Structure probing data (DMS and 2A3) for a 170-nucleotide construct. Values are in units of 0.01, from 0 to 300, in steps of 10. 2A3 adducts were read by reverse transcription with SuperScript II with manganese. Source: RMDB library 15KLIB, as collected in RNAgym.
RNA sequence: GGGAACGACUCGAGUAGAGUCGAAAACGUCUUCCCUUCCCCCGCGAUUCUUCUUCGACUCGGCCCGGCUCAUUUCGGCAAAGGGCGGCGGUCCUUAGUUCUCUUACUCUUUUCUGUAAAGAGGAGAUAGCAGUAGACUUCGGUCUACUGAAAAGAAACAACAACAACAAC
Reactivity to DMS in 0.01 (KOAc 150mM, MgCl2 10mM, bicine 150mM(pH8.5), 24C), signal-to-noise 8, nucleotides 027 to 129: c190g020u020c070u010u000c000c000c000u030u000c010c000c000c000c000g050c130g000a000u040u030c040u000u000c070u020u020c000g020a050c060u010c050g010g040c000c030c040g040g000c080u000c060a130u040u000u040c060g010g040c070a060a090a120g030g010g010c000g020g000c100g010g000u030c000c000u000u050a100g000u000u000c060u030c020u000u010a160c030u030c010u000u000u000u000c130u060g000u050a010a010a010g030a030g040g010a060g030a040u010a050g010
Reactivity to 2A3 in 0.01 (KOAc 150mM, MgCl2 10mM, bicine 150mM(pH8.5), 24C), signal-to-noise 9, nucleotides 027 to 129: c050g110u040c040u050u060c010c010c000u010u030c000c000c000c000c000g020c050g020a040u050u020c010u060u020c000u060u060c030g040a030c030u000c030g030g000c010c010c000g010g000c020u040c090a150u070u120u100c050g010g000c040a110a100a110g020g010g000c000g000g020c040g030g010u010c000c000u030u100a030g010u080u010c020u000c000u040u090a150c010u020c000u040u040u060u050c090u170g240u230a040a030a010g010a000g030g010a010g000a020u090a030g020